Source information
The record gives the reactivity of an RNA of 177 nucleotides to DMS and 2A3. Reactivities are given for positions 27 through 126. For 2A3, 5,720 sequencing reads were counted.
RNA sequence: GGGAACGACUCGAGUAGAGUCGAAAACAAGAGAGGGUGCUUCUCUCAGCCCUCUCACUGGGAAAUCUUUCUCUGGAAUCCCGAUAGGUUGUAGAGACUAGGGAGUGUUAUGGAGGGCUAAUUUACCGACGAUAUCACUAUUCGUAGUGAUAUCGUCAAAAGAAACAACAACAACAAC
Reactivity to DMS in 0.01 (KOAc 150mM, MgCl2 10mM, bicine 150mM(pH8.5), 24C), signal-to-noise 7, nucleotides 027 to 126: c160a110a100g010a010g010a020g010g010g020u000g020c150u010u000c020u000c010u010c050a300g010c000c000c000u000c010u000c050a050c060u000g010g000g000a040a060a150u010c160u010u000u000c020u000c010u010g010g010a110a130u010c010c010c020g010a160u010a130g010g020u000u000g010u010a090g010a140g000a030c120u000a110g010g000g000a060g010u000g000u010u020a080u010g000g000a050g000g000g010c080u010a060a050u010u000u010a110c200c100
Reactivity to 2A3 in 0.01 (KOAc 150mM, MgCl2 10mM, bicine 150mM(pH8.5), 24C), signal-to-noise 5, nucleotides 027 to 126: c070a070a020g000a000g010a010g030g060g050u100g080c070u100u080c010u030c000u010c020a010g000c010c000c000u010c000u000c010a020c010u030g000g010g080a020a050a100u130c080u040u090u000c010u000c000u020g080g090a090a090u010c030c000c010g010a140u140a170g070g040u040u060g070u120a080g040a000g010a130c020u030a020g040g000g010a040g020u100g060u150u160a120u210g040g010a040g040g000g000c030u060a080a140u180u130u180a140c060c060